An RNA of 177 nucleotides, treated with 2A3 and DMS and read out base by base. DMS adducts were read by reverse transcription with MarathonRT. It was measured as part of the RMDB library TTRDEL.
[RMDB]
RNA sequence: GGGAACGACUCGAGUAGAGUCGAAAAGAUAUGGAUGUGGUAGGAACUACACACUCGGAAACGAGAAUGUGCCUACCAAGCAUCCUAAGUCAAAAGCAAGAACGGAUGUUCGCAUCCGUUCUUGCAACCAUACAUGAUGGUUCGCCAUCAUGUAUGGAAAAGAAACAACAACAACAAC
Reactivity to 2A3 in 0.01 (KOAc 150mM, MgCl2 10mM, bicine 150mM(pH8.5), 24C), signal-to-noise 6, nucleotides 027 to 126: g030a020u090a040u150g010g000a010u010g040u080g030g020u000a000g010g030a060a000c040u300a030c070a000c000a010c000u010c000g020g020a100a090a050c030g010a010g040a230a300u150g000u010g020c000c000u000a000c000c000a000a010g010c000a000u000c000c000u030a130a020g040u010c040a020a040a040a100g010c010a000a000g000a000a000c000g010g000a010u010g030u150u230c290g000c080a000u000c000c000g000u000u000c000u000u000g000c000a000a000
Reactivity to DMS in 0.01 (KOAc 150mM, MgCl2 10mM, bicine 150mM(pH8.5), 24C), signal-to-noise 6, nucleotides 027 to 126: g000a040u000a300u000g010g020a000u000g030u010g000g020u000a010g000g000a130a030c100u010a300c020a010c060a060c010u000c000g010g000a100a100a200c010g000a010g010a110a080u000g000u000g000c010c000u000a000c010c010a050a050g010c010a000u000c000c000u010a050a150g010u000c040a080a080a100a100g000c010a010a020g000a010a020c000g000g010a010u000g010u000u020c230g030c010a000u000c000c000g000u000u000c000u000u000g000c010a010a040